[RMDB]
RNA sequence: GGGAACGACUCGAGUAGAGUCGAAAAGAUGAUUAGUUCGCUAAUCAUCAAAGAACGCUGCAACGCGCACAGAGCGCGCGAGAGCGAGAAUGCGCGAAGAAAAAAGUUACGGGUUCGCCCGUAACAACGUAAGGAAGUUCUUCGGAACUUCCUUACGAAAAGAAACAACAACAACAAC
Reactivity to 2A3 in 0.01 (KOAc 150mM, MgCl2 10mM, bicine 150mM(pH8.5), 24C), signal-to-noise 2, nucleotides 027 to 126: g010a000u010g000a000u020u000a010g040u020u050c120g000c090u010a000a010u000c000a000u000c000a020a010a000g050a120a010c020g000c090u100g010c040a100a030c010g000c010g000c080a010c030a070g180a040g060c040g030c020g010c030g100a040g010a010g050c040g010a030g020a020a040u130g000c060g000c040g100a100a120g070a080a250a010a020a010a020g000u000u000a000c010g010g020g000u010u040c220g040c030c000c000g000u010a000a000c000a000a010
Reactivity to DMS in 0.01 (KOAc 150mM, MgCl2 10mM, bicine 150mM(pH8.5), 24C), signal-to-noise 3, nucleotides 027 to 126: g000a010u000g010a000u000u000a020g020u010u010c180g040c000u010a000a010u000c000a010u000c000a060a100a090g000a170a170c040g000c030u000g000c050a090a040c000g000c000g010c000a090c180a140g000a210g010c030g020c020g000c030g000a170g000a130g010c020g010a120g000a090a080u000g000c050g030c060g020a070a090g030a000a070a060a100a090a080g020u000u000a020c000g010g000g010u000u010c180g010c000c000c000g000u000a000a000c010a030a070
The record gives the reactivity of an RNA of 177 nucleotides to 2A3 and DMS. For DMS, 2,203 sequencing reads were counted. DMS adducts were read by reverse transcription with MarathonRT. The reactions ran in a buffer of 150 mM KOAc, 10 mM MgCl2 and 150 mM bicine (pH 8.5), at 24 C. Values cover nucleotides 27 to 126. It was measured as part of the RMDB library M2PK50.